[RMDB]
RNA sequence: GGGAACGACUCGAGUAGAGUCGAAAAGAUAUGGAUACUUUUGACGCUUGAAACAUGCGUUGAAAUAAGUUCUUCGGAAACGAAGAACUUAUGGAGCAUGGAGUAUGAGCGAUAAGUAUCCUAAGUCGUACUCCUCAUAGUUCGCUAUGAGGAGUACAAAAGAAACAACAACAACAAC
Reactivity to DMS in 0.01 (KOAc 150mM, MgCl2 10mM, bicine 150mM(pH8.5), 24C), signal-to-noise 2, nucleotides 027 to 126: g010a060u000a280u000g010g000a020u010a000c010u000u000u010u010g040a170c050g010c000u000u010g000a260a190a100c010a020u000g000c010g020u040u020g030a150a160a020u010a000a000g020u000u000c000u000u000c000g000g000a130a100a260c010g010a010a030g000a000a000c000u000u000a000u000g000g020a070g010c000a010u000g000g000a090g020u020a090u000g000a000g000c000g030a060u000a000a010g020u000a000u020c010c000u000a050a090g030u010c090
Reactivity to 2A3 in 0.01 (KOAc 150mM, MgCl2 10mM, bicine 150mM(pH8.5), 24C), signal-to-noise 3, nucleotides 027 to 126: g050a020u160a060u250g000g000a010u010a010c000u170u230u100u300g300a130c030g030c010u000u000g010a030a020a020c000a020u020g000c000g280u300u080g000a010a020a000u010a000a010g010u000u040c000u000u020c030g040g070a070a100a080c030g000a010a000g000a000a010c000u000u010a010u000g020g000a010g000c000a000u010g000g020a020g000u000a060u300g000a000g000c010g000a010u030a030a020g000u010a000u020c000c000u020a130a010g060u060c100